[RMDB]
RNA sequence: GGGAACGACUCGAGUAGAGUCGAAAAAAAUAUCCUUUUUUACGUAAAAAAACUACGAUGGAUAUCUUCAAUAUGGACAAGGUUUCCUUUAAGUACGUACAGAUGAUGACUACGAAAGGUAUCUUUAAUGCGGGUAGAUAUCAUCAGUCCAGUAUCGGUGUAACAACUGGUUCGCCAGUUGUUACACAAAAGAAACAACAACAACAAC
Reactivity to 2A3 in 0.01 (KOAc 150mM, MgCl2 10mM, bicine 150mM(pH8.5), 24C), signal-to-noise 1, nucleotides 027 to 156: a000a000a000u120a100u110c070c020u160u040u000u000u110u160a100c070g040u100a300a210a000a000a000a000a000c100u130a050c080g000a080u040g030g030a000u000a000u070c000u070u050c100a220a070u040a040u300g020g020a040c040a040a030g000g080u000u080u170c010c000u000u100u180a140a120g000u000a000c120g020u000a090c000a040g010a040u030g010a000u030g000a040c010u000a030c030g140a030a040a000g050g000u070a010u000c050u020u160u160a160a040u250g090c020g000g080g000u030a000g000a040u040a010u030c010a030u030c010a040g080u000c060c020a010g010u040a010u080c050g050
Chemical mapping of a 207-nucleotide RNA with 2A3. For 2A3 the reverse transcriptase was SuperScript II with manganese. The reactions ran in a buffer of 150 mM KOAc, 10 mM MgCl2 and 150 mM bicine (pH 8.5), at 24 C.